[RMDB]
The data come from the RNA Mapping Database (RMDB), libraries RFM100 and RFMREP.
Structure probing data (DMS and 2A3) for a 177-nucleotide construct.
As a SHAPE reagent, 2A3 marks flexible, mostly unpaired nucleotides at the ribose 2'-OH.
Values are in units of 0.01, from 0 to 300, in steps of 10.
The reactions ran in a buffer of 150 mM KOAc, 10 mM MgCl2 and 150 mM bicine (pH 8.5), at 24 C.
For DMS the reverse transcriptase was MarathonRT.
For 2A3, 787 sequencing reads were counted.
RNA sequence: GGGAACGACUCGAGUAGAGUCGAAAAUAUGCAAGUGUGUUCCUCUAUUUGACGCUAAAGGUGGGUGCCCCCAUUGAAACACUUCACAAAUGUUGCUGUUGCAUUUGGUAGUAUUUGUACCUUUAGCUAUGCCCUCUGUAUUCGUACAGAGGGCAUAAAAAGAAACAACAACAACAAC
Reactivity to DMS in 0.01 (KOAc 150mM, MgCl2 10mM, bicine 150mM(pH8.5), 24C), signal-to-noise 4, nucleotides 027 to 126: u020a040u030g010c120a070a070g020u010g010u020g010u010u000c010c020u000c160u030a130u010u010u010g010a090c140g000c010u000a000a000a010g000g000u000g020g040g020u010g010c050c040c090c020c030a070u010u000g020a080a020a050c050a020c020u000u010c040a090c090a020a030a040u000g000u000u010g020c090u020g030u000u010g000c030a020u000u000u010g000g020u020a040g000u010a040u020u000u040g010u020a050c010c000u000u010u000a010g000c020
Reactivity to 2A3 in 0.01 (KOAc 150mM, MgCl2 10mM, bicine 150mM(pH8.5), 24C), signal-to-noise 2, nucleotides 027 to 126: u300a040u050g100c150a030a050g030u010g020u040g020u130u000c000c000u040c010u030a090u100u180u210g070a040c120g000c000u020a030a000a000g010g000u030g020g150g000u130g030c020c030c000c010c000a010u030u120g050a020a010a000c030a000c000u080u040c080a070c020a170a050a000u150g020u090u070g110c170u050g000u140u050g030c020a080u000u040u030g030g000u030a030g010u030a110u090u110u130g190u080a020c000c000u000u000u000a000g020c000